[RMDB]
RNA sequence: GGGAACGACUCGAGUAGAGUCGAAAAAUAAAUUGUCAUAUCUGGAUCCAACAGUUAAACCAUGUGAUGGUGUAUACUGUGGUAUGGCGUAAAACAUCGGAGAAAGUACAAAAGUACAUAAAAAAAAUCAUAUUGUUUGGUUCGCCAAACAAUAUGAAAAAGAAACAACAACAACAAC
Reactivity to DMS in 0.01 (KOAc 150mM, MgCl2 10mM, bicine 150mM(pH8.5), 24C), signal-to-noise 2, nucleotides 027 to 126: a070u030a060a080a070u020u010g000u000c010a040u010a020u000c000u000g010g000a140u030c020c020a110a110c020a000g010u000u000a090a290a060c010c030a010u010g050u020g020a050u000g000g000u000g010u000a150u020a010c000u030g020u010g000g020u000a000u000g010g000c000g020u000a040a080a080a070c160a050u010c120g010g010a130g000a060a060a150g000u000a010c040a070a040a040a230g010u010a000c010a070u000a010a020a020a080a090a010a040a210
Reactivity to 2A3 in 0.01 (KOAc 150mM, MgCl2 10mM, bicine 150mM(pH8.5), 24C), signal-to-noise 2, nucleotides 027 to 126: a000u170a010a070a070u070u050g010u020c010a000u000a020u000c030u110g280g080a050u020c030c000a000a010c000a000g000u010u000a010a030a030c000c000a030u060g170u140g300a210u000g090g000u040g020u000a050u020a010c000u020g000u020g000g000u010a000u000g000g000c000g010u040a000a080a100a000c050a090u110c070g050g000a050g140a140a100a060g050u010a000c050a040a300a060a010g020u020a030c000a060u230a120a140a030a010a020a020a030a060
Conditions: 150 mM KOAc, 10 mM MgCl2 and 150 mM bicine (pH 8.5), 24 C. Structure probing data (DMS and 2A3) for a 177-nucleotide construct. Source: RMDB library M2PK90, as collected in RNAgym. The DMS profile rests on 1,299 reads. For 2A3, 1,184 sequencing reads were counted. For 2A3 the reverse transcriptase was SuperScript II with manganese.